[RMDB]
RNA sequence: GGGAACGACUCGAGUAGAGUCGAAAAAGCUUUCAAGCUAGUACCGCUAGCGACACACCCUCCCUGUGCUGGAAGCUCCCCACCGCGGGGGGCACCAGCAGCCCAGCGUACCCCUCAAGGCCGCUGCGGUUCACAGACUACGCGUGGUGUGGGCCGGGCUAUAGCAUUUCUUCGGAAAUGCUAUAGCAAAAGAAACAACAACAACAAC
Reactivity to 2A3 in 0.01 (KOAc 150mM, MgCl2 10mM, bicine 150mM(pH8.5), 24C), signal-to-noise 1, nucleotides 027 to 156: a000g070c130u110u100u070c060a060a050g010c000u000a000g000u010a130c070c100g000c000u040a010g080c000g220a040c010a000c010a000c020c000c050u020c030c030c000u040g020u000g000c000u000g000g000a130a000g010c000u000c000c010c000c000a070c040c150g030c220g010g000g030g000g010g040c000a030c000c000a000g000c000a010g000c010c000c000a000g000c000g020u280a300c000c000c000c000u170c060a050a000g000g010c000c000g000c020u000g030c050g020g000u030u010c040a000c000a010g080a010c070u140a060c260g040c000g060u110g000g000u000g000u020g000g010g000c060c000g050g040